[RMDB]
RNA sequence: GGGAACGACUCGAGUAGAGUCGAAAACAAAAGAAAGAAAAAGAAAAGAAAAGAAAAGAAAAUUGGUCAGGUAGCCCGCAGUGGACGUGACCAAUCUGCGGCCAAAAGAAAAGGAAAGAAAAGAAAACAUAAAUCAUAAUUUCGAUUAUGAUUUAUGAAAAGAAACAACAACAACAAC
Reactivity to 2A3 in 0.01 (KOAc 150mM, MgCl2 10mM, bicine 150mM(pH8.5), 24C), signal-to-noise 2, nucleotides 027 to 126: c000a000a170a050a000g090a060a090a010g070a090a140a080a020a000g090a070a090a030a010g120a000a160a000a000g040a060a060a000a030g060a030a050a040a100u010u040g010g010u020c000a000g020g040u050a040g110c030c000c060g220c050a020g000u190g170g020a000c030g080u010g010a010c000c000a000a020u000c000u020g010c020g030g070c060c030a060a090a000a020g100a010a070a010a040g050g010a040a030a030g000a020a090a050a000g080a000a120a000a000
Reactivity to DMS in 0.01 (KOAc 150mM, MgCl2 10mM, bicine 150mM(pH8.5), 24C), signal-to-noise 2, nucleotides 027 to 126: c040a020a010a050a100g010a120a080a090g000a050a000a100a020a060g000a070a030a060a230g010a110a060a040a090g050a070a020a100a070g000a150a070a050a040u000u000g010g000u000c000a050g010g030u010a090g000c010c030c020g040c150a060g040u040g000g040a040c010g020u030g000a000c010c010a050a060u010c010u000g000c090g010g000c040c040a050a020a110a080g010a040a030a070a050g000g010a080a040a100g000a030a020a120a080g000a090a050a070a070